[RMDB]
RNA sequence: GGGAACGACUCGAGUAGAGUCGAAAAGACGCCUUUAGAAGAAGAGGCUAGGGGGUAUUCCGGUGUGGGAUACUUAGUAAUAUGCAACGCUAAUUGCAUAAGACUGUAGGACGGAAUUUACAGUCUUUAGAGAUAAGCACGUUCGCGUGCUUAUCAACUGCAGUGUAUAGUUCGCUAUACACUGCAGAAAAGAAACAACAACAACAAC
Reactivity to 2A3 in 0.01 (KOAc 150mM, MgCl2 10mM, bicine 150mM(pH8.5), 24C), signal-to-noise 6, nucleotides 027 to 156: g050a030c070g020c000c010u050u050u080a210g040a300a020g020a040a010g010a030g030g000c020u040a070g030g020g020g000g000u010a040u020u040c050c050g140g070u230g050u230g100g020g000a010u020a040c020u010u040a020g020u050a030a120u030a040u100g000c010a030a010c070g030c170u120a080a100u090u020g000c000a010u010a050a020g010a000c000u010g010u020a010g030g090a040c090g040g060a060a020u080u090u030a020c010a000g000u000c000u040u030u030a070g010a000g000a000u000a000a000g000c010a000c000g000u020u050c170g010c000g070u000g000c000u000u000a000u000c000a000a020
Reactivity to DMS in 0.01 (KOAc 150mM, MgCl2 10mM, bicine 150mM(pH8.5), 24C), signal-to-noise 2, nucleotides 027 to 156: g010a100c080g000c020c010u000u000u000a120g000a150a180g020a200a130g000a050g010g020c030u000a070g000g030g000g000g030u000a040u010u000c000c000g030g000u000g040u010g020g040g010a010u000a000c020u010u000a060g010u000a090a130u000a050u000g020c030a020a070c130g010c150u010a090a140u000u000g000c000a060u000a060a050g010a020c000u000g010u000a050g010g010a250c050g000g000a090a300u000u000u000a020c000a040g030u000c020u000u000u000a060g000a170g010a020u000a010a010g020c000a020c000g030u000u010c300g020c030g070u010g020c000u030u010a000u000c000a040a100